[RMDB]
RNA sequence: GGGAACGACUCGAGUAGAGUCGAAAAUAAAACUACAUGGUGGGUCCAUGGGAACCCUGCAUACUACUACAAUCCAGAUGCUGAGCGGUACGCAGACAGAGCGGAAAACAUCUUCAAUGCAUAUCUUUGCGUGCUACAGGAGGCAGCAAUACAUGGAUAUACUAGUGAUAUUCGUAUCACUAGUAUAAAAAGAAACAACAACAACAAC
Reactivity to 2A3 in 0.01 (KOAc 150mM, MgCl2 10mM, bicine 150mM(pH8.5), 24C), signal-to-noise 5, nucleotides 027 to 156: u060a000a090a020a030c070u150a030c040a050u070g010g030u070g060g080g050u040c020c020a050u040g020g030g030a040a060c000c010c000u020g040c040a100u080a180c030u060a040c020u030a050c100a050a050u050c040c020a020g000a040u050g000c020u010g020a020g080c060g010g010u030a000c010g000c000a010g030a020c010a030g030a010g030c020g030g030a030a080a020a060c060a110u120c030u120u080c070a090a090u150g000c030a090u070a070u180c000u040u080u050g000c010g010u010g000c020u030a050c060a050g060g040a030g060g040c000a000g000c010a040a030u070a130c070a110u060g010g020a000
Reactivity to DMS in 0.01 (KOAc 150mM, MgCl2 10mM, bicine 150mM(pH8.5), 24C), signal-to-noise 3, nucleotides 027 to 156: u000a070a060a050a130c020u000a020c030a050u000g020g040u020g010g040g000u000c020c010a030u000g000g020g030a120a100c070c030c010u010g020c050a070u000a090c070u000a060c020u000a080c100a080a100u000c020c000a100g020a110u020g030c040u000g010a160g040c020g010g020u000a030c000g010c000a040g010a050c030a070g000a180g010c020g010g000a070a090a100a110c070a100u010c090u000u000c080a070a130u010g000c010a180u000a040u000c050u010u010u000g040c010g000u000g000c040u000a080c040a130g010g010a150g000g020c060a040g030c050a080a100u000a080c040a080u010g020g010a170

The record gives the reactivity of an RNA of 207 nucleotides to 2A3 and DMS. For 2A3, 4,217 sequencing reads were counted. Reactivities are rounded to 0.1 and cut off at 0 and 3. Source: RMDB library OK3TST, as collected in RNAgym. The reactions ran in a buffer of 150 mM KOAc, 10 mM MgCl2 and 150 mM bicine (pH 8.5), at 24 C.